[RMDB]
RNA sequence: GGGAACGACUCGAGUAGAGUCGAAAACAUUAGCCGUUCGCGGCUAAUGCCGACUGUCUUGUUUGAUGGUAGAGUGGAAGGACAGGUACACCUUUUUAGAAAUCGCCCAUUCAUUCGUGAAUGGGAAUCAGCCUGAAUAUUUCGAUAUUCAGGCUGAAAAAGAAACAACAACAACAAC
Reactivity to DMS in 0.01 (KOAc 150mM, MgCl2 10mM, bicine 150mM(pH8.5), 24C), signal-to-noise 3, nucleotides 027 to 126: c010a010u000u000a000g010c000c000g030u000u020c200g020c000g010g010c000u000a000a010u010g010c050c040g000a130c080u000g000u000c020u000u000g000u000u000u000g000a080u000g010g010u000a030g000a080g030u000g000g020a130a050g010g010a040c030a020g000g000u000a120c090a100c070c010u000u010u010u010u010a120g000a070a070a090u000c190g000c000c000c000a020u000u000c000a040u000u020c190g020u000g000a000a000u000g000g000g010a000a010
Reactivity to 2A3 in 0.01 (KOAc 150mM, MgCl2 10mM, bicine 150mM(pH8.5), 24C), signal-to-noise 2, nucleotides 027 to 126: c000a000u010u010a000g000c010c020g040u020u050c220g000c020g110g030c000u000a000a010u000g030c010c000g080a060c030u040g030u040c000u050u260g090u210u150u140g090a080u070g020g080u120a080g020a030g110u110g020g020a050a030g050g010a000c000a040g040g010u080a000c030a070c010c040u060u090u000u040u170a160g090a050a110a030u150c080g040c000c000c000a000u000u000c000a020u010u060c140g080u010g000a010a010u000g010g000g000a000a000
Structure probing data (DMS and 2A3) for a 177-nucleotide construct.
DMS adducts were read by reverse transcription with MarathonRT.
The RNA was probed in 150 mM KOAc, 10 mM MgCl2 and 150 mM bicine (pH 8.5) at 24 C.
Reactivities are given for positions 27 through 126.
Values are in units of 0.01, from 0 to 300, in steps of 10.
For DMS, 3,611 sequencing reads were counted.
The 2A3 profile rests on 2,123 reads.